[RMDB]
RNA sequence: GGGAACGACUCGAGUAGAGUCGAAAAAAGAUCGCGGUAGGAUGUUUGAUGGCGUGGAUAUACUACAUCGUUGUCGGAUACCUCACUGGCCUAUUGGCUGUGCCGAAAGACGAUGAAGAGAAACCUGACUGCUAAAUCACUUCGGUGAUUUAGCAGUAAAAGAAACAACAACAACAAC
Reactivity to DMS in 0.01 (KOAc 150mM, MgCl2 10mM, bicine 150mM(pH8.5), 24C), signal-to-noise 1, nucleotides 027 to 126: a040a000g000a040u030c020g000c050g000g030u000a100g000g000a010u000g000u020u000u010g010a050u020g000g000c080g010u000g000g010a100u000a150u050a160c020u000a050c000a000u000c000g000u000u000g000u000c010g000g000a150u030a100c220c200u220c030a040c020u040g030g060c000c000u010a110u000u030g010g000c000u000g000u000g000c010c000g000a120a040a110g000a000c000g020a030u000g010a090a020g000a110g030a080a100a120c040c080u020g000
Reactivity to 2A3 in 0.01 (KOAc 150mM, MgCl2 10mM, bicine 150mM(pH8.5), 24C), signal-to-noise 2, nucleotides 027 to 126: a000a000g120a010u010c050g000c010g090g010u060a080g140g010a060u020g030u060u180u070g130a040u060g010g030c000g040u050g030g050a040u040a000u020a100c020u020a000c040a020u000c000g000u000u000g050u050c000g100g000a060u070a300c030c000u080c000a040c020u090g050g000c070c000u280a300u230u210g010g000c010u050g000u010g000c000c000g140a130a090a020g010a000c000g000a000u020g040a060a020g030a010g000a200a070a000c000c010u050g030
The record gives the reactivity of an RNA of 177 nucleotides to DMS and 2A3. It was measured as part of the RMDB library OK1LIB.